[RMDB]
RNA sequence: GGGAACGACUCGAGUAGAGUCGAAAAUCAAACCCCCCCUUGUAGCUCAGUGGUAGAGCGCUUCACUCGUAUUCCAAUACUGCCAUGAAGAGGUCCGCGGUUCAAUCCCGCGUGGUGGCAAAAAAAACUCACAUACAGAGUUCGCUCUGUAUGUGAGAAAAGAAACAACAACAACAAC
Reactivity to DMS in 0.01 (KOAc 150mM, MgCl2 10mM, bicine 150mM(pH8.5), 24C), signal-to-noise 1, nucleotides 027 to 126: u010c030a110a100a300c010c000c000c000c000c070c010u000u010g000u000a100g030c010u000c040a050g000u020g020g020u010a020g000a080g000c050g000c050u020u000c060a040c010u000c010g000u000a120u000u000c080c040a050a080u010a030c100u010g020c010c020a030u000g000a070a160g000a020g000g000u000c070c000g010c030g030g000u000u000c200a070a300u030c280c000c000g040c070g000u000g020g020u000g000g000c010a000a000a000a040a080a120a140a080
The record gives the reactivity of an RNA of 177 nucleotides to DMS. DMS adducts were read by reverse transcription with MarathonRT. It was measured as part of the RMDB library M2PK90. The RNA was probed in 150 mM KOAc, 10 mM MgCl2 and 150 mM bicine (pH 8.5) at 24 C.